[RMDB]
RNA sequence: GGGAACGACUCGAGUAGAGUCGAAAAGACAAAUGCAGCAUAUUAGGCUAAGCAGGAAAGGGAGGGUAGCUCCUGGUGUCAGUUCAUACGGUGUGAUGCAUCUGCGUCGUGCACACAUGCACCCAAACGGGCUGUAAUUUUUCGAAAUUACAGCCCGAAAAGAAACAACAACAACAAC
Reactivity to DMS in 0.01 (KOAc 150mM, MgCl2 10mM, bicine 150mM(pH8.5), 24C), signal-to-noise 1, nucleotides 027 to 126: g000a070c020a060a040a080u030g010c080a070g000c030a060u000a170u000u000a100g030g020c060u000a070a050g020c070a060g000g010a070a070a030g010g010g000a050g000g000g020u000a020g010c050u000c000c000u010g000g030u000g000u000c050a050g030u000u000c070a070u010a070c110g040g010u000g010u010g000a110u000g010c030a020u000c140u000g010c100g000u000c140g000u000g050c020a020c050a020c100a090u000g030c060a060c020c010c010a030a150a160
Reactivity to 2A3 in 0.01 (KOAc 150mM, MgCl2 10mM, bicine 150mM(pH8.5), 24C), signal-to-noise 1, nucleotides 027 to 126: g010a020c030a010a080a060u200g000c000a030g050c020a060u030a100u300u170a110g110g000c040u040a050a020g040c040a000g100g050a200a020a010g000g000g060a010g000g120g060u070a040g030c030u020c000c010u060g000g000u030g000u040c080a080g080u040u110c050a030u120a130c070g030g010u010g000u010g010a140u000g010c000a040u020c040u180g060c070g060u160c030g020u100g000c000a000c020a040c030a060u070g080c020a100c010c020c000a060a060a000
This 177-nucleotide RNA was probed chemically with DMS and 2A3.
For 2A3, 791 sequencing reads were counted.
For DMS the reverse transcriptase was MarathonRT.
The data come from the RNA Mapping Database (RMDB), library M2PK90.
Conditions: 150 mM KOAc, 10 mM MgCl2 and 150 mM bicine (pH 8.5), 24 C.
The DMS profile rests on 911 reads.